[RMDB]
RNA sequence: GGGAACGACUCGAGUAGAGUCGAAAAAUAGUGUGUAAUACACAGAGUGCUCAUGCAUUAGAGGAAGCAAAGAAUGCAGCCAUCUAUUAUGCGCAAUAUCUGUGUAAGCCAAUACUUAUACUUGACCAGGCACUUUAUGAGCAAUUAGUAGUAGAGCAUUAUCUAUGCGGUUCGCCGCAUAGAUAAUAAAAGAAACAACAACAACAAC
Reactivity to DMS in 0.01 (KOAc 150mM, MgCl2 10mM, bicine 150mM(pH8.5), 24C), signal-to-noise 3, nucleotides 027 to 156: a080u000a060g020u000g040u010g010u000a110a160u000a140c040a050c010a110g010a060g000u000g010c010u000c040a100u000g040c070a100u000u010a040g020a160g030g010a100a140g010c030a040a080a160g030a130a100u000g000c020a160g040c040c020a120u000c030u000a070u000u000a060u000g030c070g000c040a050a100u000a080u000c050u010g020u000g030u000a000a110g020c020c050a090a100u010a160c040u040u010a090u010a050c050u020u000g020a050c050c030a090g010g000c030a020c030u000u000u000a080u020g010a140g020c000a050a100u010u010a060g050u000a090g030u000a080g010a130g000c050
Reactivity to 2A3 in 0.01 (KOAc 150mM, MgCl2 10mM, bicine 150mM(pH8.5), 24C), signal-to-noise 6, nucleotides 027 to 156: a000u150a040g030u040g010u020g020u080a070a080u050a070c010a000c000a000g010a000g010u020g000c010u020c030a010u060g050c030a060u060u080a010g000a010g000g030a030a030g020c030a050a050a170g160a220a070u090g010c000a030g060c020c000a130u010c020u010a020u070u040a010u050g000c020g000c010a020a060u050a150u140c010u000g000u010g000u010a020a020g050c020c000a040a060u080a070c020u130u070a030u030a130c030u070u110g060a080c010c020a030g070g000c030a010c020u060u110u090a100u160g060a040g050c020a050a070u100u040a070g070u030a010g030u060a020g030a010g080c030